[RMDB]
This 177-nucleotide RNA was probed chemically with DMS and 2A3.
RNA sequence: GGGAACGACUCGAGUAGAGUCGAAAACAUACGGACUUCGGUCCGUAUGAAAGAACCUCAAAUUGACGCAAACUUCCGCGUCAUCGCGAGGAAGCGAGGAUAAAAUCGAGGUGUUCGCACCUCGAAAGAUCAACAUGCAGUUCGCUGCAUGUUGAUCAAAAGAAACAACAACAACAAC
Reactivity to DMS in 0.01 (KOAc 150mM, MgCl2 10mM, bicine 150mM(pH8.5), 24C), signal-to-noise 3, nucleotides 027 to 126: c020a020u000a000c000g010g010a010c000u000u000c200g020g000u000c000c000g000u000a010u000g010a090a050a100g000a070a170c010c000u000c030a040a300a110u000u000g000a030c040g000c020a080a130a080c180u010u000c180c160g000c000g010u000c000a040u000c110g000c300g000a010g000g010a050a060g000c100g010a120g010g020a150u000a030a090a100a060u000c010g020a020g000g000u010g000u000u010c190g030c010a020c000c000u000c000g000a010a040a080
Reactivity to 2A3 in 0.01 (KOAc 150mM, MgCl2 10mM, bicine 150mM(pH8.5), 24C), signal-to-noise 3, nucleotides 027 to 126: c010a000u000a000c000g010g000a020c010u040u050c200g040g010u000c000c000g010u000a000u000g000a000a010a000g040a040a050c000c000u030c010a030a050a060u040u040g020a000c000g010c010a050a200a280c150u250u100c120c100g000c010g030u000c000a010u010c000g010c040g020a040g050g030a030a000g060c030g040a060g070g060a110u110a180a180a030a040u050c000g010a000g000g040u010g020u050u020c150g040c070a010c000c000u000c000g010a010a000a000
Conditions: 150 mM KOAc, 10 mM MgCl2 and 150 mM bicine (pH 8.5), 24 C. It was measured as part of the RMDB library M2PK50.